[RMDB]
RNA sequence: GGGAACGACUCGAGUAGAGUCGAAAAAAAAAGAGCGUAAUCGCGUCAUUGAGUGACGUGAAGAUCAUCCAAGUGUGCUGUCUACAGUCGUAGAUACCGCACAAUACGCUGAUGAUCAUUCAAAAAAGGGUCUUUAAAGAUUCGUCUUUAAAGACCCAAAAGAAACAACAACAACAAC
Reactivity to DMS in 0.01 (KOAc 150mM, MgCl2 10mM, bicine 150mM(pH8.5), 24C), signal-to-noise 1, nucleotides 027 to 126: a020a000a020a060a060g010a100g030c030g000u000a110a080u000c010g000c000g010u010c010a020u010u000g000a130g020u000g000a000c000g000u000g000a040a100g000a010u000c000a000u000c010c110a120a180g010u020g000u000g020c080u000g010u010c000u010a010c000a200g010u020c250g000u010a000g030a010u000a000c190c090g010c000a010c030a050a050u000a160c050g020c070u000g000a000u000g000a020u000c010a130u000u010c090a000a030a090a030a070a060
Source: RMDB library M2PK90, as collected in RNAgym. This 177-nucleotide RNA was probed chemically with DMS. The reactions ran in a buffer of 150 mM KOAc, 10 mM MgCl2 and 150 mM bicine (pH 8.5), at 24 C.